[RMDB]
An RNA of 177 nucleotides, treated with DMS and 2A3 and read out base by base.
The reactions ran in a buffer of 150 mM KOAc, 10 mM MgCl2 and 150 mM bicine (pH 8.5), at 24 C.
For 2A3 the reverse transcriptase was SuperScript II with manganese.
Values cover nucleotides 27 to 126.
The DMS profile rests on 10,641 reads.
The data come from the RNA Mapping Database (RMDB), library OK2TST.
RNA sequence: GGGAACGACUCGAGUAGAGUCGAAAAAGCAAUCACCGCCGCCGACGAAAAUAACCGAUAUGCCACAGGUUCUGGCAAUAGGCGAACUACUUUCCACCCAGCUAGAUACGCAGCUGCCGAUGCGUGACCUAAAUAUUACGUUCGCGUAAUAUUUAGGAAAAGAAACAACAACAACAAC
Reactivity to DMS in 0.01 (KOAc 150mM, MgCl2 10mM, bicine 150mM(pH8.5), 24C), signal-to-noise 7, nucleotides 027 to 126: a080g020c060a080a080u000c060a080c050c040g020c060c040g020c040c040g000a090c090g000a070a060a080a080u010a090a070c050c020g000a090u010a100u000g010c020c020a040c120a110g020g010u000u010c070u010g010g020c040a060a070u010a080g010g010c030g020a050a090c080u000a060c070u000u000u000c040c030a120c050c030c010a080g000c050u000a050g000a080u010a030c040g010c020a030g010c040u000g010c050c050g010a070u000g010c020g010u000g010a140
Reactivity to 2A3 in 0.01 (KOAc 150mM, MgCl2 10mM, bicine 150mM(pH8.5), 24C), signal-to-noise 5, nucleotides 027 to 126: a000g040c030a040a060u090c020a040c060c020g010c020c020g040c020c000g040a070c030g020a060a040a040a110u110a060a030c030c010g000a040u030a040u250g020c020c010a060c030a070g080g040u100u060c030u050g010g000c000a020a070u120a080g020g000c020g020a030a010c010u070a030c000u050u050u040c010c010a050c030c010c010a000g010c030u060a030g020a120u110a090c020g000c010a010g000c010u080g040c030c040g030a030u030g000c020g020u020g010a030